[RMDB]
RNA sequence: GGGAACGACUCGAGUAGAGUCGAAAAUGCUGAGCUUUCGAGCUCAGCAGAGGCAAGCAAGCAGCGCAACGAGACAAGACGAGCAUAAGAUCGAGCUUGCUACAAUACGGCACUUCGGUGCCGUAAAGAUCUAGGGCGAUUUCGAUCGCCCUAGAUCAAAAGAAACAACAACAACAAC
Reactivity to DMS in 0.01 (KOAc 150mM, MgCl2 10mM, bicine 150mM(pH8.5), 24C), signal-to-noise 1, nucleotides 027 to 126: u010g000c000u000g000a060g010c010u000u020u000c160g030a030g030c000u010c000a000g000c000a000g000a080g010g000c040a050a020g010c020a040a080g010c050a120g000c100g000c040a180a070c070g000a010g000a180c120a030a060g000a050c030g030a240g000c010a120u010a070a130g000a070u000c070g000a180g000c000u000u000g000c000u010a080c130a060a230u000a000c000g010g010c000a000c000u000u000c250g070g010u000g000c000c000g000u000a000a040a080
Reactivity to 2A3 in 0.01 (KOAc 150mM, MgCl2 10mM, bicine 150mM(pH8.5), 24C), signal-to-noise 1, nucleotides 027 to 126: u030g000c000u010g000a000g000c000u010u060u210c300g060a000g000c010u000c000a000g040c000a000g010a000g010g060c110a070a010g000c020a070a010g000c010a020g080c020g060c060a120a170c050g040a030g060a140c070a140a000g070a140c000g020a000g050c070a090u140a230a050g030a080u060c040g020a070g010c010u000u010g000c000u000a010c000a000a070u030a010c000g000g000c000a000c000u030u000c140g110g000u000g010c000c000g000u000a000a000a000